[RMDB]
Conditions: 150 mM KOAc, 10 mM MgCl2 and 150 mM bicine (pH 8.5), 24 C.
This 207-nucleotide RNA was probed chemically with DMS and 2A3.
For 2A3 the reverse transcriptase was SuperScript II with manganese.
RNA sequence: GGGAACGACUCGAGUAGAGUCGAAAAUCCAGCAUCUCCCCGGACACUCUUGCGUUACAAGGGGGAAAUUUGGAAAGACUUCAGUCAUCGUGAAAUCUGGAAGCGAUGAAACAGAUAGCUACGAUGAGUCCAUCGCCUACUCCAUCAUCAUGAGCCAUCCCAACGAUAAUUUCGAUUAUCGUUGGGAAAAAGAAACAACAACAACAAC
Reactivity to DMS in 0.01 (KOAc 150mM, MgCl2 10mM, bicine 150mM(pH8.5), 24C), signal-to-noise 1, nucleotides 027 to 156: u000c000c000a120g020c160a130u020c050u000c030c010c020c000g000g010a230c060a060c000u020c060u000u000g060c010g000u000u010a160c050a100a030g020g050g000g020g000a040a020a090u010u000u000g040g040a050a070a170g030a080c050u000u000c030a100g050u000c020a030u000c030g010u000g020a120a150a060u020c070u000g000g020a110a300g020c060g000a030u020g000a190a050a100c010a080g000a020u000a060g020c050u050a030c000g000a000u000g020a090g000u000c060c050a060u000c100g000c000c010u000a040c090u050c010c020a000u020c050a160u000c070a070u000g020a070g030c010c020a160
Reactivity to 2A3 in 0.01 (KOAc 150mM, MgCl2 10mM, bicine 150mM(pH8.5), 24C), signal-to-noise 2, nucleotides 027 to 156: u000c000c000a020g030c080a090u020c090u170c030c000c000c000g080g020a040c020a020c030u160c060u130u140g020c030g060u020u180a150c070a110a060g030g000g010g010g160a000a020a080u280u110u060g010g010a090a050a070g030a020c050u150u020c040a070g030u010c000a010u000c000g000u010g020a000a020a140u060c050u050g010g060a050a030g070c110g040a060u110g210a090a130a000c010a000g060a020u070a020g010c050u090a020c040g050a040u090g010a000g050u010c020c010a060u040c080g010c010c000u010a050c000u080c100c000a040u060c030a050u020c020a050u140g060a040g020c000c000a020